[RMDB]
RNA sequence: GGGAACGACUCGAGUAGAGUCGAAAACGGUAGAACAGACGUUGCUCGACCGGCUGCCGCCGCUGCAGGUGGAAAUCGCUCAUCAGGCGCGUGUCGGUCUGGUCGGUCUGCGCCACGUCGAGGGCGACCACCCCUGGAGUUUCGACUCCAGGGGUGGAAAAGAAACAACAACAACAAC
Reactivity to DMS in 0.01 (KOAc 150mM, MgCl2 10mM, bicine 150mM(pH8.5), 24C), signal-to-noise 1, nucleotides 027 to 126: c120g010g010u000a150g000a060a040c070a260g000a050c000g000u010u020g000c010u000c130g010a010c000c000g000g000c010u000g020c010c010g000c010c010g030c000u000g050c050a120g000g020u010g010g000a100a120a130u000c220g020c130u000c020a060u000c050a120g010g010c010g000c040g000u000g020u000c010g020g000u000c110u000g020g000u000c010g020g020u000c010u000g130c140g010c000c060a020c000g020u000c020g000a100g010g010g000c030g020a160
Reactivity to 2A3 in 0.01 (KOAc 150mM, MgCl2 10mM, bicine 150mM(pH8.5), 24C), signal-to-noise 1, nucleotides 027 to 126: c040g050g120u160a060g040a190a010c040a030g020a010c000g010u020u050g000c000u020c030g010a010c010c000g000g010c010u030g020c000c000g000c020c000g010c120u300g040c030a050g010g030u030g030g010a040a190a200u300c230g010c070u170c020a030u000c030a110g200g000c040g040c010g000u070g090u170c000g000g040u000c100u110g010g010u020c010g000g000u040c030u070g020c040g000c020c000a010c010g000u000c030g000a060g010g040g060c040g050a040